[RMDB]
RNA sequence: GGGAACGACUCGAGUAGAGUCGAAAACUUGAACUCCUGGCCUCAAGCAAUCUGCCCACCUUGGCCUCCCAAAGUGCUGAGAUUACAGGCAUGAGACACAGUGCCCAGCCAAGAGCAGAGAUUCUAAUGAAUUGUGUAUCAAAGGUCAAAUGAACUGCCCAUGUCGUAAUUUCGAUUACGACAUGGGAAAAGAAACAACAACAACAAC
Reactivity to DMS in 0.01 (KOAc 150mM, MgCl2 10mM, bicine 150mM(pH8.5), 24C), signal-to-noise 1, nucleotides 027 to 156: c060u000u010g040a070a080c000u000c030c000u000g030g020c010c060u000c090a020a130g060c030a070a080u000c010u000g020c030c090c070a130c100c030u010u000g030g000c000c040u000c030c000c050a020a110a140g040u010g010c050u020g030a210g030a050u000u000a110c060a080g000g050c050a080u000g020a130g000a190c040a030c080a120g000u000g000c000c000c030a120g040c040c010a070a060g020a030g010c040a060g020a150g020a150u000u000c040u010a050a110u010g010a030a020u000u030g050u000g010u010a140u000c040a030a020a060g000g020u000c050a020a050a130u000g000a080a090c030u040g000
Reactivity to 2A3 in 0.01 (KOAc 150mM, MgCl2 10mM, bicine 150mM(pH8.5), 24C), signal-to-noise 2, nucleotides 027 to 156: c040u090u110g020a030a040c010u030c000c010u010g020g000c000c000u070c070a110a000g040c040a020a120u020c010u060g000c000c000c000a040c000c010u000u030g050g000c000c000u080c100c060c000a120a110a010g120u100g020c050u050g030a100g020a230u090u160a040c040a030g010g000c030a030u060g030a020g050a140c040a000c030a080g060u040g020c010c000c000a000g000c000c000a030a000g020a050g030c020a000g030a010g020a050u080u020c040u240a130a060u110g100a020a030u110u030g040u000g010u050a060u150c080a110a060a010g000g010u000c010a000a100a030u170g040a040a000c010u130g070
Chemical mapping of a 207-nucleotide RNA with DMS and 2A3.
The RNA was probed in 150 mM KOAc, 10 mM MgCl2 and 150 mM bicine (pH 8.5) at 24 C.
The data come from the RNA Mapping Database (RMDB), library OK3TST.